This 177-nucleotide RNA was probed chemically with 2A3 and DMS.
[RMDB]
RNA sequence: GGGAACGACUCGAGUAGAGUCGAAAAGAUAUGGAAGCUUUGUCAGCUGGUACAGGAUGACGUCUCUAUAUCGGAAACGAUAUAGAGAUGUAAACUGUACCCAGCUUGGAUUUAAGCUUCCUAAGUCCCUUGUUCAAAGGUUCGCCUUUGAACAAGGAAAAGAAACAACAACAACAAC
Reactivity to 2A3 in 0.01 (KOAc 150mM, MgCl2 10mM, bicine 150mM(pH8.5), 24C), signal-to-noise 3, nucleotides 027 to 126: g040a030u150a080u260g000g000a000a020g000c000u030u020u020g030u020c010a010g000c030u000g010g000u010a010c010a010g060g000a140u300g070a050c000g000u000c000u000c000u000a000u000a000u000c010g020g000a120a120a050c010g000a020u010a000u000a000g000a000g000a000u000g010u000a010a000a000c000u000g000u010a010c030c000c000a000g030c000u060u140g080g000a030u240u300u300a000a000g000c010u000u010c000c000u010a040a010g050u020c000
Reactivity to DMS in 0.01 (KOAc 150mM, MgCl2 10mM, bicine 150mM(pH8.5), 24C), signal-to-noise 3, nucleotides 027 to 126: g010a110u010a300u010g010g010a020a010g010c000u000u000u000g020u000c000a040g020c000u000g000g000u020a010c000a020g020g010a060u010g010a260c300g000u000c000u020c000u000a000u000a010u000c000g000g010a130a120a210c010g010a010u000a010u000a000g000a010g010a000u000g040u000a010a280a300c000u000g010u000a010c160c060c020a000g000c000u000u010g010g000a020u010u020u000a010a020g010c000u000u000c000c010u000a040a080g010u000c030

For DMS the reverse transcriptase was MarathonRT.